[RMDB]
RNA sequence: GGGAACGACUCGAGUAGAGUCGAAAAAUACACCAGCAGUAGGACUAAGCGACCGUCACAACAAGGUUGUGCUGGUAUCCGACGGUCGUAUAGCCCUGUCUUGCAGGUUGCCUUGCACUGACGUGCCACACCAUUUACAGAUUCGUCUGUAAAUGAAGUUUCAUAUCUGGUUCGCCAGAUAUGAAACAAAAGAAACAACAACAACAAC
Reactivity to DMS in 0.01 (KOAc 150mM, MgCl2 10mM, bicine 150mM(pH8.5), 24C), signal-to-noise 3, nucleotides 027 to 156: a130u010a110c070a200c020c030a090g050c020a080g000u010a010g030g020a020c000u010a020a300g020c010g000a020c020c030g000u020c030a160c060a100a070c050a070a090g010g020u000u000g030u000g010c040u010g020g040u000a040u010c110c030g020a050c030g050g010u000c020g020u000a120u000a050g000c000c000c000u010g020u030c000u000u000g050c030a110g000g050u010u000g030c000c140u000u000g020c020a080c050u010g010a090c190g020u000g010c020c060a090c090a130c070c000a010u000u000u020a010c000a000g000a070u000u000c300g030u000c010u000g020u010a000a000a010u000g000a060a060
Reactivity to 2A3 in 0.01 (KOAc 150mM, MgCl2 10mM, bicine 150mM(pH8.5), 24C), signal-to-noise 6, nucleotides 027 to 156: a000u150a020c060a000c020c000a000g000c010a000g020u050a010g000g020a020c010u030a100a050g000c010g000a010c000c000g010u010c020a040c020a060a160c060a220a120g130g030u070u060g040u100g070c070u080g050g050u030a090u050c050c050g000a000c000g000g000u000c000g010u040a030u050a050g000c000c000c010u020g050u050c050u060u160g000c000a010g010g020u060u100g040c030c010u030u070g000c020a020c050u180g090a050c140g020u020g010c020c020a090c000a020c030c010a000u000u000u000a000c000a000g010a020u000u110c140g070u000c090u000g000u000a000a000a000u000g010a030a010